[RMDB]
RNA sequence: GGGAACGACUCGAGUAGAGUCGAAAAGAAAGAAAGAAGCGAGCUGGCGCAGCCGCACGGGCAACCGUCAAUCCCGCACUUCACAAGUCUUGUCGUUCUGACAGGACAUCCAUCAACCCACCGGGAAAAAAGGACUACAGCUUCGGCUGUAGUCCAACCUGAAUCAAAAGUUCGCUUUUGAUUCAGGAAAAGAAACAACAACAACAAC
Reactivity to 2A3 in 0.01 (KOAc 150mM, MgCl2 10mM, bicine 150mM(pH8.5), 24C), signal-to-noise 2, nucleotides 027 to 156: g040a020a030a020g050a000a120a000g060a040a010g010c030g040a020g060c050u050g100g100c050g000c040a000g000c000c000g030c020a030c030g040g010g010c040a030a020c030c020g010u030c000a000a080u050c030c010c000g040c010a060c030u090u100c040a050c060a180a030g000u000c000u000u000g020u000c000g070u170u240c230u280g000a000c010a000g000g000a010c000a010u030c000c000a070u040c030a050a210c020c000c040a040c050c070g000g000g040a040a180a040a000a000a000g000g000a030c010u000a000c000a000g000c000u010u100c150g140g000c000u000g000u000a000g000u000c000c000a000a000

Background
Source: RMDB library M2RFPK, as collected in RNAgym. Chemical mapping of a 207-nucleotide RNA with 2A3. For 2A3, 999 sequencing reads were counted. The reactions ran in a buffer of 150 mM KOAc, 10 mM MgCl2 and 150 mM bicine (pH 8.5), at 24 C.